[RMDB]
RNA sequence: GGGAACGACUCGAGUAGAGUCGAAAAGUCGUGCGUAGAGUUAACGUGCCCUACGUGUGUCUCCUAGCUAAUAAAGAGCAAGAAGCUAUUUUGAUGUCUGAAGACGUUAAGUUAAACCCUUCAGAAGAACCAAGCCCGUUCGCGGGCUUGAAAAGAAACAACAACAACAAC
Reactivity to 2A3 in 0.01 (KOAc 150mM, MgCl2 10mM, bicine 150mM(pH8.5), 24C), signal-to-noise 3, nucleotides 027 to 129: g000u010c000g000u000g000c020g000u000a000g010a020g020u010u040a100a090c110g070u160g010c010c000c020u000a000c000g000u010g010u010g000u000c000u000c030c000u000a030g000c030u070a080a000u070a110a190a020g100a020g000c030a020a080g040a090a030g020c010u060a150u020u130u090u190g150a190u100g030u000c010u000g000a040a000g070a030c050g010u010u070a020a020g010u020u070a050a060a080c000c000c000u010u010c000a000g010a040a010g000a010a000c010
Reactivity to DMS in 0.01 (KOAc 150mM, MgCl2 10mM, bicine 150mM(pH8.5), 24C), signal-to-noise 4, nucleotides 027 to 129: g000u010c020g030u010g010c040g020u000a040g000a000g040u020u000a000a000c180g040u040g000c040c060c000u010a010c000g010u000g010u030g030u010c010u000c010c010u000a030g040c070u020a130a080u050a040a120a100g030a080g040c050a120a110g030a040a020g030c030u030a060u000u050u040u020g040a000u070g010u010c010u030g000a020a030g020a030c180g050u060u020a090a160g020u040u000a090a040a000c000c030c000u020u020c020a140g030a030a060g040a130a080c150
An RNA of 170 nucleotides, treated with 2A3 and DMS and read out base by base. The DMS profile rests on 7,602 reads. Reactivities are rounded to 0.1 and cut off at 0 and 3. The RNA was probed in 150 mM KOAc, 10 mM MgCl2 and 150 mM bicine (pH 8.5) at 24 C. For 2A3, 3,987 sequencing reads were counted.